[RMDB]
RNA sequence: GGGAACGACUCGAGUAGAGUCGAAAAAGAUCAGCUCAUCGAGGGCCAUCAGUGGCUAAAGAACAACCUGAAUGUCACACCGAAAGUGGGCUGGUCCAUAGAUCCAUUUGGGCAUGGCAGCACGGUGCGGCCAUGCCGAGUUCGCUCGGCAUGGCCGAAAAGAAACAACAACAACAAC
Reactivity to 2A3 in 0.01 (KOAc 150mM, MgCl2 10mM, bicine 150mM(pH8.5), 24C), signal-to-noise 2, nucleotides 027 to 126: a000g020a000u020c000a000g010c000u010c030a060u100c000g050a020g030g010g070c070c040a130u150c100a050g020u000g040g040c010u040a080a090a030g120a140a100c080a050a090c030c030u040g030a090a050u080g020u040c030a020c050a050c130c010g010a020a010a010g050u010g040g010g000c010u000g000g030u000c000c000a010u050a020g100a060u050c000c000a000u110u010u170g110g000g000c010a030u030g050g000c040a060g000c030a020c140g100g040u130g000
Reactivity to DMS in 0.01 (KOAc 150mM, MgCl2 10mM, bicine 150mM(pH8.5), 24C), signal-to-noise 2, nucleotides 027 to 126: a080g010a020u020c000a000g060c010u000c050a040u000c010g020a300g000g000g000c080c120a080u000c130a150g000u000g020g010c020u000a020a140a060g040a000a140c160a060a090c190c010u010g000a150a130u000g030u000c030a030c030a140c030c020g020a040a080a120g020u010g000g030g000c010u000g010g000u000c010c030a050u000a100g040a110u020c030c030a120u000u000u000g030g000g000c020a020u000g010g000c030a030g000c040a060c100g000g000u010g020